[RMDB]
RNA sequence: GGGAACGACUCGAGUAGAGUCGAAAAAUGAGUAGGUGUCUGGCAUCUGACAAGAGGCGAUGAUAUCUGCCAUAACGGUGAAGCAGAAGUAAUAUCACCCGUGAAUAAUAAGAUUAUCCUUGCUAUAGACAUAUUCAAGUUUCGACUUGAAUAUGUCAAAAGAAACAACAACAACAAC
Reactivity to DMS in 0.01 (KOAc 150mM, MgCl2 10mM, bicine 150mM(pH8.5), 24C), signal-to-noise 9, nucleotides 027 to 126: a040u000g010a100g020u000a020g010g020u000g010u000c030u000g000g010c020a050u000c020u010g010a150c300a100a040g010a050g000g010c020g010a090u020g000a020u000a030u000c000u000g000c020c020a050u000a070a040c080g010g020u000g000a080a130g010c100a090g010a080a110g020u030a080a110u010a090u010c030a060c050c000c030g000u020g010a090a070u020a050a070u020a070a070g000a300u010u010a080u000c030c030u000u010g020c050u010a120u010a200
Reactivity to 2A3 in 0.01 (KOAc 150mM, MgCl2 10mM, bicine 150mM(pH8.5), 24C), signal-to-noise 9, nucleotides 027 to 126: a000u090g010a050g020u040a010g010g010u010g010u020c030u040g130g010c020a050u010c030u070g080a080c070a120a040g020a020g050g000c040g020a030u080g000a000u050a010u030c000u000g000c000c000a030u060a090a030c040g020g020u040g030a050a010g040c080a030g040a190a010g130u160a080a090u080a040u150c020a030c020c040c030g050u050g080a050a040u130a130a010u100a100a060g050a090u070u100a020u120c020c010u040u060g020c010u080a080u120a230
Chemical mapping of a 177-nucleotide RNA with DMS and 2A3.
For 2A3 the reverse transcriptase was SuperScript II with manganese.
Values cover nucleotides 27 to 126.
The reactions ran in a buffer of 150 mM KOAc, 10 mM MgCl2 and 150 mM bicine (pH 8.5), at 24 C.